[RMDB]
RNA sequence: GGGAACGACUCGAGUAGAGUCGAAAACGGACCACCUGCACCUCGAGAUUGACGUCGACGUCCUCGAGGAGCAGCUGCGUCGACACCACUUCGAGGACGCCAACGGCUGGUCGCUCAAAUACGAGGACACUAUCCUCCCGUUCGCGGGAGGAUAGUGAAAAGAAACAACAACAACAAC
Reactivity to 2A3 in 0.01 (KOAc 150mM, MgCl2 10mM, bicine 150mM(pH8.5), 24C), signal-to-noise 3, nucleotides 027 to 126: c020g050g010a020c010c000a020c000c030u020g000c020a040c020c000u010c010g030a030g030a150u180u240g010a030c030g030u250c150g150a250c020g050u050c000c010u000c000g010a020g000g000a010g000c000a020g000c010u020g000c070g000u000c010g010a040c030a050c040c020a070c040u080u050c060g050a070g030g050a070c010g010c030c020a110a040c090g100g000c060u040g080g000u000c030g030c060u060c000a070a150a040u250a110c100g020a070g020g070a010
Reactivity to DMS in 0.01 (KOAc 150mM, MgCl2 10mM, bicine 150mM(pH8.5), 24C), signal-to-noise 1, nucleotides 027 to 126: c200g000g020a080c020c040a070c190c020u000g020c030a150c020c000u010c000g040a030g010a160u000u000g050a010c040g000u010c260g010a130c040g000u000c080c000u000c010g020a020g000g020a060g000c030a030g010c100u000g020c090g010u020c010g000a080c040a150c010c040a090c090u010u000c100g000a060g000g010a050c040g030c020c070a120a080c160g000g000c160u010g030g000u000c050g010c050u030c040a030a060a110u010a050c140g000a030g000g020a290
Chemical mapping of a 177-nucleotide RNA with 2A3 and DMS.
For DMS, 1,731 sequencing reads were counted.
It was measured as part of the RMDB library OK2TST.
2A3 adducts were read by reverse transcription with SuperScript II with manganese.
The RNA was probed in 150 mM KOAc, 10 mM MgCl2 and 150 mM bicine (pH 8.5) at 24 C.
For DMS the reverse transcriptase was MarathonRT.
The 2A3 profile rests on 2,804 reads.
As a SHAPE reagent, 2A3 marks flexible, mostly unpaired nucleotides at the ribose 2'-OH.